[RMDB]
RNA sequence: GGGAACGACUCGAGUAGAGUCGAAAAAUAAGUCCUUUCGAGGACUUAUAAUGCUGCCCAAAGAGCACCUGGGGGUGUCUGGGCUGCUAAACUCAUCAGCCGUGGCUUUGGGGUUCGCCCCAAAGAAUGGUCAUAGUUAAUUCGUUAACUAUGACCAAAAAGAAACAACAACAACAAC
Reactivity to 2A3 in 0.01 (KOAc 150mM, MgCl2 10mM, bicine 150mM(pH8.5), 24C), signal-to-noise 3, nucleotides 027 to 126: a000u020a000a000g000u010c010c000u050u040u070c180g120a010g000g000a010c000u010u000a010u010a010a050u090g010c000u030g010c000c000c010a070a150a020g070a030g020c020a010c040c050u180g230g050g070g040g050u010g000u020c020u000g000g010g000c000u010g000c010u030a070a070a070c030u020c040a100u030c030a040g120c020c020g080u070g120g000c000u000u020u020g010g000g000g020u010u020c150g130c000c000c000c000a000a000a000g020a010a060
Reactivity to DMS in 0.01 (KOAc 150mM, MgCl2 10mM, bicine 150mM(pH8.5), 24C), signal-to-noise 5, nucleotides 027 to 126: a020u000a000a010g010u000c000c000u000u000u010c140g010a020g000g000a020c000u000u000a000u000a050a090u000g010c030u000g000c000c000c000a040a110a130g010a180g000c000a010c010c010u000g020g020g020g020g030u000g010u000c050u000g000g000g000c010u000g000c030u000a070a100a060c050u000c030a100u010c050a050g000c040c050g020u000g010g000c000u000u000u000g000g010g000g010u000u010c240g010c010c000c000c010a000a000a010g000a100a080